[RMDB]
Source: RMDB library OK2TST, as collected in RNAgym. This 177-nucleotide RNA was probed chemically with DMS and 2A3.
RNA sequence: GGGAACGACUCGAGUAGAGUCGAAAACCCCGGGCUGCGGGCCAUGGGCGGCCUGCAUCUGCAACGCGGGUUGCUCGAAGUCGUAGUCGCGCCGGGUAACCCGGCUGGCACGGGUGUCGAAGCGCAACGGUACUAGCCUAUUCGUAGGCUAGUACCGAAAAGAAACAACAACAACAAC
Reactivity to DMS in 0.01 (KOAc 150mM, MgCl2 10mM, bicine 150mM(pH8.5), 24C), signal-to-noise 2, nucleotides 027 to 126: c040c000c000c080g020g010g010c030u000g010c010g000g000g000c010c040a160u010g000g020g000c140g020g010c000c000u000g010c010a030u000c090u020g000c110a110a120c100g000c050g010g000g000u000u000g010c000u000c000g010a170a140g010u000c020g030u000a070g030u010c030g020c060g020c060c010g000g000g010u020a110a070c060c000c010g000g000c060u000g020g000c070a050c040g010g000g000u010g010u000c030g000a100a110g020c030g020c080a060a250
Reactivity to 2A3 in 0.01 (KOAc 150mM, MgCl2 10mM, bicine 150mM(pH8.5), 24C), signal-to-noise 2, nucleotides 027 to 126: c010c000c000c010g030g000g000c030u030g020c040g030g060g230c020c080a230u260g100g110g100c100g000g030c000c000u000g000c000a020u020c020u060g070c040a100a040c060g040c090g040g030g000u040u040g000c000u000c010g070a140a050g120u030c000g050u050a060g050u060c040g020c010g000c060c000g050g030g000u080a080a070c020c000c000g040g020c010u050g030g000c060a010c020g000g000g040u060g020u040c020g060a090a010g000c000g020c080a030a070

For DMS the reverse transcriptase was MarathonRT.